This 177-nucleotide RNA was probed chemically with DMS and 2A3. For 2A3, 3,173 sequencing reads were counted. 2A3 is a SHAPE reagent: it acylates the 2'-hydroxyl of flexible nucleotides of all four kinds. For DMS the reverse transcriptase was MarathonRT. It was measured as part of the RMDB library OK1LIB. The reactions ran in a buffer of 150 mM KOAc, 10 mM MgCl2 and 150 mM bicine (pH 8.5), at 24 C.
RNA sequence: GGGAACGACUCGAGUAGAGUCGAAAAAGUGUGCCUGUAAUAAUAGCUGUGGGUUUGCAUACAACGUUACCCACGUAUCCGGCUACGAACACAGCAACGUGACAUUGCACACAAGCAUCAGCCACAGAACGAAGGUAGUGUUCGCACUACCUUCGUUAAAAGAAACAACAACAACAAC
Reactivity to DMS in 0.01 (KOAc 150mM, MgCl2 10mM, bicine 150mM(pH8.5), 24C), signal-to-noise 3, nucleotides 027 to 126: a120g000u000g020u000g000c010c170u000g030u000a060a060u050a130a200u020a060g060c020u020g000u020g000g010g000u000u010u030g000c120a100u030a100c270a130a050c210g040u000u000a040c060c080c030a140c050g000u020a010u000c170c140g000g000c050u000a090c040g000a100a090c080a030c020a030g010c000a060a120c230g000u010g000a020c050a010u000u020g000c060a040c010a030c020a060a150g000c060a060u000c090a090g010c010c020a040c060a060g000
Reactivity to 2A3 in 0.01 (KOAc 150mM, MgCl2 10mM, bicine 150mM(pH8.5), 24C), signal-to-noise 4, nucleotides 027 to 126: a000g030u050g010u010g010c000c030u000g030u020a100a090u080a180a060u100a060g010c030u040g010u020g000g040g080u060u120u160g110c040a060u130a210c040a040a060c110g060u080u080a050c010c020c000a020c020g000u020a110u060c050c080g030g000c000u030a030c030g040a070a010c000a010c030a020g010c010a070a080c090g000u020g010a040c040a090u030u190g000c000a010c000a000c000a060a000g020c020a040u130c080a040g090c030c010a130c010a050g130